[RMDB]
RNA sequence: GGGAACGACUCGAGUAGAGUCGAAAACCACCGCUUUUCGUCAAGAAACAGAAACCGCAACAGGGUGUCGCAGUAAUAAUCUUUCAGAAAGCGGGCAGUUUUAUGCCUGAUAUUACACCACGCUUUCCUUUAGAUGACGGUUCGCCGUCAUCUAAAGAAAAGAAACAACAACAACAAC
Reactivity to 2A3 in 0.01 (KOAc 150mM, MgCl2 10mM, bicine 150mM(pH8.5), 24C), signal-to-noise 1, nucleotides 027 to 126: c000c000a020c000c020g100c010u060u010u090u130c040g040u010c050a090a000g030a050a230a060c030a000g160a080a170a010c100c000g030c100a020a120c020a130g100g170g000u100g010u070c050g000c060a000g040u030a010a010u060a060a090u020c020u050u110u030c020a040g010a060a030a000g000c000g000g010g000c030a020g000u100u080u080u120a000u050g050c020c000u010g050a020u000a030u170u100a030c050a030c000c120a090c090g050c060u000u050u000c000
Reactivity to DMS in 0.01 (KOAc 150mM, MgCl2 10mM, bicine 150mM(pH8.5), 24C), signal-to-noise 1, nucleotides 027 to 126: c000c010a250c050c070g000c040u000u000u000u000c030g020u000c100a070a090g010a050a040a040c090a120g010a040a120a020c030c070g040c090a010a050c070a090g010g000g010u000g000u000c030g010c030a050g000u000a020a120u000a040a130u000c120u010u000u000c120a130g000a040a000a040g000c010g010g000g000c120a100g030u030u010u010u040a040u000g040c080c000u000g000a100u000a000u000u000a030c100a140c060c060a110c230g010c000u000u000u000c010
The record gives the reactivity of an RNA of 177 nucleotides to 2A3 and DMS.
High 2A3 reactivity points to a flexible backbone, as in loops and unpaired stretches.
For 2A3, 789 sequencing reads were counted.
Reactivities are given for positions 27 through 126.
The DMS profile rests on 631 reads.
The reactions ran in a buffer of 150 mM KOAc, 10 mM MgCl2 and 150 mM bicine (pH 8.5), at 24 C.